[RMDB]
RNA sequence: GGGAACGACUCGAGUAGAGUCGAAAAGAGCGAUUAGACAAAGGGGUAGAGCUACAUAUUAGAUAGCUGUAUAAUCGUUCUAGUUACAUCAAAACAUCUUCAAUAUUUAUUACUUACUUUCCUUUCUGCCAGAGUACGGUAUUCGUACCGUACUCAACUUGCCACAACGAUUCGUCGUUGUGGCAAGAAAAGAAACAACAACAACAAC
Reactivity to 2A3 in 0.01 (KOAc 150mM, MgCl2 10mM, bicine 150mM(pH8.5), 24C), signal-to-noise 3, nucleotides 027 to 156: g000a000g000c000g010a010u020u040a050g050a080c130a040a070a070g040g010g080g000u040a030g020a000g070c000u020a010c030a070u180a180u240u140a110g130a300u000a000g040c000u000g030u090a010u020a030a010u000c000g000u000u000c020u000a020g000u020u140a040c050a050u140c100a070a110a070a140c060a110u060c050u290u070c040a080a090u020a170u300u110u090a110u200u100a130c030u060u040a040c000u050u070u120c000c000u040u080u070c020u030g080c030c010a020g000a000g000u000a000c000g000g040u000a000u020u000c120g020u010a010c000c000g000u020a000c000u000c000a000a000

An RNA of 207 nucleotides, treated with 2A3 and read out base by base. The reactions ran in a buffer of 150 mM KOAc, 10 mM MgCl2 and 150 mM bicine (pH 8.5), at 24 C.